Source: RMDB library RFM100, as collected in RNAgym. An RNA of 177 nucleotides, treated with 2A3 and DMS and read out base by base. The RNA was probed in 150 mM KOAc, 10 mM MgCl2 and 150 mM bicine (pH 8.5) at 24 C. 2A3 is a SHAPE reagent: it acylates the 2'-hydroxyl of flexible nucleotides of all four kinds. Values cover nucleotides 27 to 126.
RNA sequence: GGGAACGACUCGAGUAGAGUCGAAAAGCUUGCGUUUGUCUGUUAUAUCUUGGUGGACGAGUAGUCGCGGUUGGGACUGAGGUGCCUACAACGUGUUUUUGAGUGGGCCUGUGUCUCUGUGUGCGCCAGGGAUGUAGCAUUUCGAUGCUACAUCCCUAAAAGAAACAACAACAACAAC
Reactivity to 2A3 in 0.01 (KOAc 150mM, MgCl2 10mM, bicine 150mM(pH8.5), 24C), signal-to-noise 1, nucleotides 027 to 126: g020c020u000u070g020c000g050u110u060u080g050u000c100u110g190u000u140a130u000a000u070c020u010u000g040g000u140g000g000a100c000g040a020g000u180a000g000u000c000g000c000g170g020u050u000g000g000g000a000c010u250g120a000g020g080u280g000c000c000u080a000c000a100a000c070g070u110g160u180u020u000u140u300g010a000g100u000g010g000g000c000c000u050g000u000g000u060c000u070c000u020g000u000g000u000g000c110g040c060c000
Reactivity to DMS in 0.01 (KOAc 150mM, MgCl2 10mM, bicine 150mM(pH8.5), 24C), signal-to-noise 1, nucleotides 027 to 126: g000c020u000u010g020c050g030u030u000u040g000u000c070u000g000u000u000a030u020a080u020c100u030u000g040g000u000g000g020a020c100g020a030g000u010a030g000u040c000g010c020g010g000u070u000g000g010g010a020c000u000g000a060g020g000u010g020c020c030u000a030c050a080a120c140g020u020g020u000u000u020u020u000g050a300g000u000g000g010g060c010c000u000g010u000g000u000c010u000c000u030g000u020g000u000g000c100g020c150c050